[RMDB]
The record gives the reactivity of an RNA of 207 nucleotides to 2A3.
2A3 adducts were read by reverse transcription with SuperScript II with manganese.
Conditions: 150 mM KOAc, 10 mM MgCl2 and 150 mM bicine (pH 8.5), 24 C.

RNA sequence: GGGAACGACUCGAGUAGAGUCGAAAAUGACUAGGAUGGCAUACCGCUUUGGGCAAAGCGUAAAAAGCCUAAAUAAAAUUAAACGCAAACAACGCGAAAUUUGCUCCUGCUUACGCUAAAGUUGCGUGAGUUCAGUUGAGCCUAGAGCUUGAGUGAUGGUACGAUCAAUGUUCGCAUUGAUCGUACCAAAAGAAACAACAACAACAAC
Reactivity to 2A3 in 0.01 (KOAc 150mM, MgCl2 10mM, bicine 150mM(pH8.5), 24C), signal-to-noise 1, nucleotides 027 to 156: u080g000a000c070u020a080g050g060a050u090g010g000c050a050u010a110c010c000g000c010u000u060u030g010g000g020c050a110a030a070g000c060g120u160a020a010a010a010a010g000c000c000u040a020a020a000u080a000a010a000a000u130u100a070a150a000c010g000c130a080a110a130c080a040a060c110g000c030g000a080a080a080u040u010u080g000c000u000c000c040u000g020c000u000u000a000c000g000c030u130a140a100a200g180u210u080g050c000g050u000g000a000g020u030u120c010a000g000u050u170g030a000g000c040c000u020a000g010a030g120c000u010u090g030a000g040u120g040a050u020